Chemical mapping of a 177-nucleotide RNA with DMS.
DMS adducts were read by reverse transcription with MarathonRT.

[RMDB]
RNA sequence: GGGAACGACUCGAGUAGAGUCGAAAACAUGCCGCUCAGUGUCGCAGAGGGGAAGGAGGUGCUUCUACUUGUCCACAAUCUGCCCCAGCAUCUUUUUGGCUACAGCUGGUACAAAGGGGAAAGAGUGUAUCCUUCCCGGGUUCGCCCGGGAAGGAUAAAAAGAAACAACAACAACAAC
Reactivity to DMS in 0.01 (KOAc 150mM, MgCl2 10mM, bicine 150mM(pH8.5), 24C), signal-to-noise 2, nucleotides 027 to 126: c130a130u010g000c000c040g000c060u000c080a080g030u000g000u000c070g020c050a090g030a130g010g020g010g000a010a070g010g020a050g000g000u000g030c060u010u000c030u000a080c100u000u000g000u000c040c030a110c130a060a080u010c080u000g000c040c060c000c010a110g000c050a040u000c030u010u000u010u030u010g000g000c040u000a030c140a100g000c050u000g000g010u000a040c070a010a050a080g010g010g020g000a070a060a040g020a130g000u010g000
For DMS, 1,114 sequencing reads were counted.